The record gives the reactivity of an RNA of 207 nucleotides to DMS and 2A3. Reactivities are given for positions 27 through 156. 2A3 adducts were read by reverse transcription with SuperScript II with manganese.
RNA sequence: GGGAACGACUCGAGUAGAGUCGAAAAAAGGUGGAGAUUCAUGUUGGACAUACGAACAAAGGGAGACAGAGUUUGCCCUAGAAUGACACUGUGGGUAAGGGGACAGCUUCAUCCUGCCUUAAUUACCUGCUGUGUGAACUGUUUUCACUCCUGUGCGUAAUGACCUGAGUUUCGACUCAGGUCAUUAAAAAGAAACAACAACAACAAC
Reactivity to DMS in 0.01 (KOAc 150mM, MgCl2 10mM, bicine 150mM(pH8.5), 24C), signal-to-noise 1, nucleotides 027 to 156: a110a040g000g030u020g000g010a140g060a080u000u020c050a040u000g010u000u000g000g010a130c040a090u000a070c070g040a130a080c100a040a190a080g030g020g000a050g040a060c060a140g000a170g020u000u000u000g020c070c040c050u000a050g040a050a100u010g010a060c030a020c000u010g000u000g020g010g010u000a030a060g110g010g020g000a030c010a010g010c090u010u010c110a160u020c140c000u010g010c000c000u010u000a070a140u020u000a000c000c030u000g010c020u000g010u000g040u000g000a060a040c050u000g010u000u000u000u000c020a080c050u020c040c010u010g030u010g000c150g000
Reactivity to 2A3 in 0.01 (KOAc 150mM, MgCl2 10mM, bicine 150mM(pH8.5), 24C), signal-to-noise 1, nucleotides 027 to 156: a000a120g140g000u050g000g090a140g000a000u140u000c070a050u010g000u030u080g000g000a060c000a070u200a050c090g060a070a000c000a040a080a020g000g000g020a020g020a010c030a020g050a070g130u010u070u270g050c000c000c000u010a030g080a190a030u050g030a030c020a040c040u050g060u070g000g070g050u000a000a000g080g000g000g090a030c000a010g000c020u240u170c090a110u070c010c010u000g000c010c000u170u060a240a200u000u000a010c000c000u050g000c090u060g030u000g000u020g030a000a000c020u030g100u020u040u090u030c080a150c030u090c010c040u010g000u000g000c020g060